Chemical mapping of a 177-nucleotide RNA with 2A3 and DMS.
Conditions: 150 mM KOAc, 10 mM MgCl2 and 150 mM bicine (pH 8.5), 24 C.
For DMS, 3,035 sequencing reads were counted.
Source: RMDB library OK2TRN, as collected in RNAgym.
For DMS the reverse transcriptase was MarathonRT.
Reactivities are given for positions 27 through 126.
The 2A3 profile rests on 964 reads.
RNA sequence: GGGAACGACUCGAGUAGAGUCGAAAACUAGUUGGUGUGCAAACCAUAAACUUAAGGAAAGAAUGCAAGGUCAACUAGGACUAGCGGUCUUCCUUGUUAUCUAUAGAGACCAUAAUUGAAUAGAGACCAGGGGAAGGUAAUUCGUUACCUUCCCCUGAAAAGAAACAACAACAACAAC
Reactivity to 2A3 in 0.01 (KOAc 150mM, MgCl2 10mM, bicine 150mM(pH8.5), 24C), signal-to-noise 1, nucleotides 027 to 126: c000u010a000g040u040u040g000g010u010g050u060g140c030a040a080a080c000c020a040u150a030a150a050c040u120u150a060a030g050g030a140a040a070g020a080a000u010g000c010a080a100g160g060u010c020a050a050c110u090a040g170g000a020c020u030a030g050c070g080g010u000c010u000u050c060c000u000u040g050u070u040a130u080c010u010a050u070a140g090a010g050a120c020c010a060u160a090a070u100u090g070a000a050u080a080g050a020g040a050c000
Reactivity to DMS in 0.01 (KOAc 150mM, MgCl2 10mM, bicine 150mM(pH8.5), 24C), signal-to-noise 4, nucleotides 027 to 126: c010u010a020g000u000u000g000g010u010g020u010g020c070a050a070a160c060c030a050u000a090a140a090c120u000u010a070a110g010g010a100a070a100g020a070a120u010g000c020a070a050g000g000u000c010a050a070c130u010a060g000g000a050c060u010a090g020c080g000g010u010c030u000u000c030c040u000u010g000u000u010a070u000c060u000a050u010a130g000a120g010a040c050c070a050u000a080a110u010u000g000a140a070u010a050g000a070g010a130c240